[RMDB]
RNA sequence: GGGAACGACUCGAGUAGAGUCGAAAAGAUAUGGACCCUACCCAGCUGCAAACUCGCACUCGGAAACGAGUGGCGAGGACGUAUAGCUGGUAGGGUCCUAAGUCAAAGUAUUGGUUCGCCAAUACAACUGGUUAAUGGAGUUCGCUCCAUUAACCAGAAAAGAAACAACAACAACAAC
Reactivity to DMS in 0.01 (KOAc 150mM, MgCl2 10mM, bicine 150mM(pH8.5), 24C), signal-to-noise 2, nucleotides 027 to 126: g000a000u000a030u030g000g010a010c020c000c010u000a000c190c110c080a020g050c010u000g020c210a110a030a040c000u000c000g000c000a010c000u000c000g030g010a000a010a020c000g010a010g020u000g010g030c010g030a030g000g020a260c200g040u000a060u020a000g050c000u000g000g000u010a000g000g030g020u000c000c000u000a000a050g000u000c000a140a090a080g000u000a020u000u000g000g000u000u020c300g010c010c000a000a000u000a000c040a170a220
Reactivity to 2A3 in 0.01 (KOAc 150mM, MgCl2 10mM, bicine 150mM(pH8.5), 24C), signal-to-noise 2, nucleotides 027 to 126: g010a000u020a020u020g000g000a000c040c000c000u000a020c130c110c060a000g010c000u220g120c290a110a010a000c000u010c000g040c000a000c020u010c000g000g000a010a030a010c030g020a010g030u020g140g000c000g000a000g010g010a010c080g080u140a190u300a300g000c000u000g000g010u010a000g010g010g000u010c000c000u000a000a000g000u000c000a010a020a020g010u010a000u000u030g050g050u050u090c290g070c100c010a000a010u010a000c020a060a100